An RNA of 177 nucleotides, treated with 2A3 and DMS and read out base by base. It was measured as part of the RMDB library TTRDEL. The 2A3 profile rests on 2,291 reads. 2A3 adducts were read by reverse transcription with SuperScript II with manganese. DMS adducts were read by reverse transcription with MarathonRT.
[RMDB]
RNA sequence: GGGAACGACUCGAGUAGAGUCGAAAAGAUAUGGAGGGAACUACGCUCCCUCAUUUCGUUGAAAUCGGAAACGAUGGAGAAAUGACCAGCGCCCUCCUAAGUCAAAACGCUAACUUCGGUUAGCGAACUAUGCUCUUACCUUCGGGUAAGAGCAUAGAAAAGAAACAACAACAACAAC
Reactivity to 2A3 in 0.01 (KOAc 150mM, MgCl2 10mM, bicine 150mM(pH8.5), 24C), signal-to-noise 1, nucleotides 027 to 126: g060a000u050a050u200g000g030a020g030g000g010a050a010c140u170a030c280g030c000u050c030c000c000u000c000a010u000u000u000c020g150u280u040g040a030a010a000u000c000g000g000a000a060a050c000g030a020u010g040g000a050g010a000a000a000u010g000a040c140c080a010g000c010g070c000c000c020u040c000c020u000a140a010g020u040c070a020a000a080a170c030g000c000u000a020a000c000u050u040c140g130g000u000u020a010g000c000g000a000a000
Reactivity to DMS in 0.01 (KOAc 150mM, MgCl2 10mM, bicine 150mM(pH8.5), 24C), signal-to-noise 2, nucleotides 027 to 126: g030a010u000a300u010g000g010a000g000g000g000a110a050c100u030a300c030g010c030u000c080c010c090u000c000a020u000u000u010c010g010u000u030g020a090a230a060u010c000g020g000a100a080a130c020g010a010u010g000g000a090g000a000a000a010u000g000a030c130c140a000g020c030g000c020c000c020u000c000c000u000a050a070g020u000c050a130a070a070a110c050g000c000u000a010a000c000u000u030c160g030g000u000u010a010g020c000g000a060a060